[RMDB]
The record gives the reactivity of an RNA of 177 nucleotides to DMS and 2A3.
The reactions ran in a buffer of 150 mM KOAc, 10 mM MgCl2 and 150 mM bicine (pH 8.5), at 24 C.
Source: RMDB library TTRINS, as collected in RNAgym.
RNA sequence: GGGAACGACUCGAGUAGAGUCGAAAAGAUAUGGACGUCAAGAGCUGAUGACCCAUGGUGAAAAAUGGGUAUAUCGGAAACGAUAUACCCAUUGGGAUCCAUGGCAAGGCUCUGGACGUCCUAAGUCCGACAAUAUGAGGUUCGCCUCAUAUUGUCGAAAAGAAACAACAACAACAAC
Reactivity to DMS in 0.01 (KOAc 150mM, MgCl2 10mM, bicine 150mM(pH8.5), 24C), signal-to-noise 2, nucleotides 027 to 126: g010a080u000a300u010g010g010a010c010g020u000c000a040a020g010a030g010c000u000g000a130u030g000a150c300c010c000a000u000g010g000u010g000a120a140a110a020a000u000g010g020g020u000a010u000a000u000c010g010g000a100a070a170c000g000a030u000a000u000a000c000c000c000a000u000u010g000g000g010a130u010c010c010a000u010g000g020c020a020a050g000g010c000u000c000u000g010g020a000c000g000u010c000c000u000a010a080g010u000c040
Reactivity to 2A3 in 0.01 (KOAc 150mM, MgCl2 10mM, bicine 150mM(pH8.5), 24C), signal-to-noise 1, nucleotides 027 to 126: g060a010u110a090u280g030g030a000c000g000u020c040a060a010g010a010g000c020u040g020a300u200g040a300c010c000c000a010u020g080g010u000g050a060a070a020a010a020u010g000g050g000u020a010u000a000u000c030g040g000a080a080a030c010g020a000u000a010u000a000c000c000c010a010u010u000g010g030g000a000u000c000c020a000u010g020g000c030a060a170g020g000c020u000c000u010g000g000a010c010g000u010c000c000u000a000a010g000u000c050